[RMDB]
RNA sequence: GGGAACGACUCGAGUAGAGUCGAAAAGCAAGUCGCAUCGCAAAACCGCGGCAAGUGGAGUUAGCGAGAGGAGGCUGGGUUUUGGCUUCCUUAAGCAAUCGGUCACCGAAAAGGUGUGGUCGUUACCUAGACAGUUUUCUGUUCGCAGAAAACUGAAUAGAUAAGUCACCUUCGGGUGACUUAUCUAAAAAGAAACAACAACAACAAC
Reactivity to 2A3 in 0.01 (KOAc 150mM, MgCl2 10mM, bicine 150mM(pH8.5), 24C), signal-to-noise 1, nucleotides 027 to 156: g020c030a010a040g040u060c010g050c040a110u060c080g090c100a140a120a000a050c050c110g000c010g110g000c140a080a060g010u060g110g000a120g040u110u190a020g010c010g000a010g000a000g060g000a000g000g000c030u000g010g080g210u120u070u220u290g010g010c010u000u050c000c000u040u000a030a000g010c010a000a000u070c000g070g000u040c000a000c050c000g060a120a050a040a250g070g000u120g000u050g020g020u010c010g060u040u070a170c000c000u020a040g070a110c000a000g010u000u000u000u000c000u020g050u000u190c270g000c110a000g000a010a010a010a010c000u000g000a010a110